[RMDB]
Chemical mapping of a 177-nucleotide RNA with DMS. Values are in units of 0.01, from 0 to 300, in steps of 10. Values cover nucleotides 27 to 126.
RNA sequence: GGGAACGACUCGAGUAGAGUCGAAAAAAAUCCAUUGAAUCUAGUAACUGAUCUUGCAUAUCUCUUGUUUCAACUGAUUUGGUAUUUUCUAAAAUUCUAUCAGCCAAUGUAGAUUUUCCGUGGUCAAUAUGGUUCUAUACUUCGGUAUAGAACCAUAAAAAGAAACAACAACAACAAC
Reactivity to DMS in 0.01 (KOAc 150mM, MgCl2 10mM, bicine 150mM(pH8.5), 24C), signal-to-noise 2, nucleotides 027 to 126: a030a050a020u010c000c000a110u010u000g010a110a060u000c040u020a050g000u010a060a090c090u000g000a050u020c060u010u010g030c070a040u000a110u000c020u000c030u000u000g000u020u000u010c070a060a130c010u000g010a050u010u000u010g000g010u000a010u000u020u000u000c110u000a090a030a030a060u000u010c030u000a030u020c030a020g000c080c070a020a060u000g010u020a040g000a060u000u000u010u010c050c030g020u010g020g020u010c140a080a130